[RMDB]
RNA sequence: GGGAACGACUCGAGUAGAGUCGAAAACAAAGAGUGCUAUGGUAUGGUGACGGAGUGCGCUGGUCAAGAGUGUAAAAGCUUUUUGAACAGAGAGCAUUUCCGGCAGCAGAGAGACCUGAAAAAGCAAUUUUUCUGGAAUUUCAGCUGUUUCCAAACUGAAUCAUCCAUGGUUCGCCAUGGAUGAUUCAAAAGAAACAACAACAACAAC
Reactivity to 2A3 in 0.01 (KOAc 150mM, MgCl2 10mM, bicine 150mM(pH8.5), 24C), signal-to-noise 1, nucleotides 027 to 156: c030a000a130a020g110a040g020u130g020c030u170a080u170g020g080u080a080u140g040g010u040g060a030c020g000g000a010g010u010g000c010g020c000u000g000g010u000c000a000a000g000a000g030u070g020u060a090a030a000a000g010c000u000u130u100u030u080g010a020a000c010a000g020a020g020a060g020c020a000u260u270u050c000c010g000g000c000a000g010c020a000g020a020g000a000g010a020c010c020u010g010a020a000a000a000a000g040c040a040a050u000u000u000u040u040c010u010g030g010a040a050u010u070u020c020a050g000c020u000g030u000u040u010c020c060a070a030a060c060u060